[RMDB]
RNA sequence: GGGAACGACUCGAGUAGAGUCGAAAACUGCGCUGAGCCCUUCUCCCCCAGCUUGCCUGUGUCCUAGGGAAUUGGAAGGUCAUCCUUCACAGGAUCGUGUGGAAGUCCUGCUCGGGGCGCAAGCAUUAUAAACCUUAGACGUUCGCGUCUAAGGUAAUCAAAUUCUUGAGUUCGCUCAAGAAUUUGAAAAAGAAACAACAACAACAAC
Reactivity to DMS in 0.01 (KOAc 150mM, MgCl2 10mM, bicine 150mM(pH8.5), 24C), signal-to-noise 2, nucleotides 027 to 156: c040u000g020c060g000c040u000g030a110g020c020c020c040u000u000c040u000c020c010c010c000c030a220g020c080u000u000g020c000c020u000g020u000g030u000c000c000u000a110g000g020g020a080a190u000u010g020g030a040a030g030g010u000c130a110u000c020c010u010u020c070a190c040a030g000g000a050u000c050g000u000g010u010g030g020a080a090g010u010c010c010u000g010c010u000c080g010g000g020g000c020g040c030a020a060g000c020a070u020u000a080u000a130a110a080c000c000u000u000a000g000a020c010g010u000u000c300g030c060g010u000c000u000a000a010g000g020u000a020a040
Reactivity to 2A3 in 0.01 (KOAc 150mM, MgCl2 10mM, bicine 150mM(pH8.5), 24C), signal-to-noise 4, nucleotides 027 to 156: c030u070g020c010g000c060u100g100a070g010c010c030c060u190u110c090u050c040c010c000c020c000a010g000c020u040u030g000c000c000u040g000u010g010u030c010c050u110a260g000g000g030a080a200u130u090g080g020a010a010g010g040u180c050a120u230c020c000u020u030c030a020c000a030g010g010a050u070c060g040u050g040u060g230g020a060a030g020u020c000c000u010g030c000u010c030g010g000g000g000c000g010c000a010a010g000c010a010u040u020a080u080a100a120a030c000c000u000u000a000g010a000c010g030u010u050c180g010c010g050u000c000u000a000a000g000g000u000a000a000
An RNA of 207 nucleotides, treated with DMS and 2A3 and read out base by base. Values are in units of 0.01, from 0 to 300, in steps of 10. The reactions ran in a buffer of 150 mM KOAc, 10 mM MgCl2 and 150 mM bicine (pH 8.5), at 24 C. For DMS, 6,525 sequencing reads were counted. For DMS the reverse transcriptase was MarathonRT.